This 177-nucleotide RNA was probed chemically with DMS.
Source: RMDB library TTRINS, as collected in RNAgym.
For DMS the reverse transcriptase was MarathonRT.

[RMDB]
RNA sequence: GGGAACGACUCGAGUAGAGUCGAAAAGAUAUGGAUCCCGUACAUCGCGAAGAACACGACUAUUGAACCUUAUAUCGGAAACGAUAUAAGGUUCAAUAGUCGUGGGAGCGAGUACGGAUCCUAAGUCGAUCAUAAGAAAGUUCGCUUUCUUAUGAUCAAAAGAAACAACAACAACAAC
Reactivity to DMS in 0.01 (KOAc 150mM, MgCl2 10mM, bicine 150mM(pH8.5), 24C), signal-to-noise 4, nucleotides 027 to 126: g010a090u010a300u020g000g000a010u000c120c040c070g020u000a000c000a140u000c000g000c000g030a140a240g000a140a230c010a010c000g000a020c000u000a000u000u000g010a010a000c000c000u010u000a010u000a010u000c000g010g010a120a080a200c000g010a010u000a000u000a010a000g000g000u000u000c000a000a000u000a000g010u000c000g010u000g010g000g000a070g010c000g000a020g010u000a010c000g000g000a000u000c000c000u000a020a100g010u010c110